[RMDB]
RNA sequence: GGGAACGACUCGAGUAGAGUCGAAAACGUGCGUACUGGGCCGCCGGCACAAUGUUCCACCCAGCCGUCUCAGAGGGCGCGGUUCGACGACGAUCAGCCAGCAGGUCAGCGGGGUCCUCCUAGCUAGACGCAUACUAUGGUUCGCCAUAGUAUGCGUAAAAGAAACAACAACAACAAC
Reactivity to 2A3 in 0.01 (KOAc 150mM, MgCl2 10mM, bicine 150mM(pH8.5), 24C), signal-to-noise 1, nucleotides 027 to 126: c010g010u060g030c020g050u130a030c000u060g010g020g020c060c020g050c040c030g040g050c080a010c000a120a140u140g040u150u060c010c010a030c020c010c000a000g020c020c040g100u090c030u010c050a050g000a040g120g060g050c000g030c030g010g020u040u030c030g050a030c020g000a010c030g010a090u010c020a000g080c040c020a020g030c020a030g030g000u040c000a020g020c000g050g000g000g000u000c000c010u030c020c010u020a000g000c000u040a040g030
Reactivity to DMS in 0.01 (KOAc 150mM, MgCl2 10mM, bicine 150mM(pH8.5), 24C), signal-to-noise 2, nucleotides 027 to 126: c120g010u010g000c060g040u000a030c060u000g000g020g050c090c140g020c060c070g020g050c080a120c090a140a050u000g010u010u000c030c040a180c160c020c030a130g010c040c030g000u000c020u000c040a060g000a080g020g010g000c060g020c040g000g000u000u000c020g020a030c040g000a160c060g000a070u000c060a090g000c030c030a030g010c070a070g000g000u010c010a070g020c070g000g010g000g000u000c040c030u000c000c000u000a050g020c130u020a100g000